[RMDB]
RNA sequence: GGGAACGACUCGAGUAGAGUCGAAAAGAAAAGAAGGGGAGUCCCCGAUCGAAUGUCCAUAGGCAGAGAAACCUCUGGAGUCCUCUAGACCGCAAGGAGGAAAUUACCAGCAGGGGGUGAUCCACCCAGACAGCACGCUUCGGCGUGCUGAAAAGAAACAACAACAACAAC
Reactivity to 2A3 in 0.01 (KOAc 150mM, MgCl2 10mM, bicine 150mM(pH8.5), 24C), signal-to-noise 1, nucleotides 027 to 129: g100a000a010a000a000g130a070a010g010g000g000g000a000g080u040c010c000c000c010g000a040u110c040g000a120a090u060g020u000c040c040a030u130a140g060g000c020a050g020a010g060a140a120a040c020c060u050c030u030g020g020a020g000u080c000c000u000c000u060a100g110a070c060c000g040c080a050a000g010g010a000g000g010a010a030a030u080u050a040c000c000a000g000c000a030g010g010g000g000g000u030g010a040u050c010c000a000c000c000c000a000g030a020
Reactivity to DMS in 0.01 (KOAc 150mM, MgCl2 10mM, bicine 150mM(pH8.5), 24C), signal-to-noise 2, nucleotides 027 to 129: g000a020a020a080a030g050a100a050g000g000g000g000a120g000u000c080c010c000c030g000a080u070c170g020a080a070u020g010u000c040c020a110u050a070g000g090c100a120g000a130g020a000a040a160c030c040u030c080u010g000g000a070g000u030c000c000u030c040u030a170g010a160c030c180g000c140a010a020g000g060a080g030g030a020a030a040u000u080a090c080c010a050g070c240a090g000g040g020g040g030u000g000a180u070c040c020a100c010c040c010a180g000a150
The data come from the RNA Mapping Database (RMDB), library 15KLIB. The record gives the reactivity of an RNA of 170 nucleotides to 2A3 and DMS. Values cover nucleotides 27 to 129. For 2A3, 3,466 sequencing reads were counted. The reactions ran in a buffer of 150 mM KOAc, 10 mM MgCl2 and 150 mM bicine (pH 8.5), at 24 C. For DMS, 5,848 sequencing reads were counted.